[RMDB]
RNA sequence: GGGAACGACUCGAGUAGAGUCGAAAACUCCCACGCGAUAGGAGUAAGCCCAUAACGAUAGGGGGAGAUGCUAGGAGUUAGAGGAGACCAAGCCGAGGAGGAAAGCAAAGAAAGCAACGGGGCUAGCGAGAGUAGAAAAGUUCGCUUUUCUACUCUCAAAAGAAACAACAACAACAAC
Reactivity to 2A3 in 0.01 (KOAc 150mM, MgCl2 10mM, bicine 150mM(pH8.5), 24C), signal-to-noise 1, nucleotides 027 to 126: c010u020c000c030c050a060c070g050c040g100a160u120a130g010g020a010g040u050a030a060g060c000c000c050a090u190a110a060c130g130a120u200a200g000g010g040g010g020a050g000a020u070g000c010u020a050g010g020a020g010u020u040a060g010a040g100g010a050g020a010c020c010a010a010g000c000c020g010a040g030g020a030g020g040a060a040a000g040c030a000a010a120g050a030a060a000g000c000a000a020c040g000g000g000g040c010u010a000g000c010
Reactivity to DMS in 0.01 (KOAc 150mM, MgCl2 10mM, bicine 150mM(pH8.5), 24C), signal-to-noise 3, nucleotides 027 to 126: c070u010c010c020c040a150c160g030c160g030a110u020a050g000g010a070g020u000a080a130g000c010c020c010a150u010a080a100c170g000a070u010a030g010g000g010g010g000a050g010a050u010g000c050u000a080g000g010a060g000u000u000a040g020a100g010g000a070g000a070c080c070a030a080g000c040c060g020a110g010g010a090g000g000a070a070a120g010c050a050a040a090g010a070a050a050g010c030a050a080c090g000g010g010g000c120u000a070g010c250
Structure probing data (2A3 and DMS) for a 177-nucleotide construct. For DMS, 1,815 sequencing reads were counted. The reactions ran in a buffer of 150 mM KOAc, 10 mM MgCl2 and 150 mM bicine (pH 8.5), at 24 C. 2A3 adducts were read by reverse transcription with SuperScript II with manganese.